[RMDB]
RNA sequence: GGGAACGACUCGAGUAGAGUCGAAAAGCGUGGCGUAAAGCGCGUCUUCGCUGAUGCCUUCACGGGCGCAGAUGCGCACAUGCAAAGGCAGUUCCAUAUGGGUGAGACUGUGCAUGAUGUCGACGCAGUCCCGGAGCGAUUUCGAUCGCUCCGGGACAAAAGAAACAACAACAACAAC
Reactivity to DMS in 0.01 (KOAc 150mM, MgCl2 10mM, bicine 150mM(pH8.5), 24C), signal-to-noise 1, nucleotides 027 to 126: g020c000g010u000g000g030c000g010u020a040a110a160g060c050g000c000g040u010c000u000u000c110g010c000u000g010a110u000g000c090c010u000u000c110a090c160g000g000g000c000g060c030a120g000a030u000g020c000g010c000a300c000a000u000g010c060a100a080a160g010g000c000a020g000u000u000c070c060a090u010a150u000g020g020g000u010g000a100g000a030c000u030g010u000g000c040a080u000g000a170u000g010u000c010g020a020c000g000c000a120
Reactivity to 2A3 in 0.01 (KOAc 150mM, MgCl2 10mM, bicine 150mM(pH8.5), 24C), signal-to-noise 1, nucleotides 027 to 126: g000c000g000u000g000g000c030g050u140a100a070a000g070c030g040c000g020u020c000u110u100c010g000c010u120g040a180u160g060c000c060u080u130c020a000c090g050g000g010c000g000c010a000g020a130u150g000c000g010c000a020c010a000u040g000c010a110a000a000g140g000c000a020g040u050u040c000c050a040u100a100u200g200g040g010u050g020a020g030a020c000u030g020u050g000c020a020u030g020a010u070g030u050c080g040a060c000g010c050a030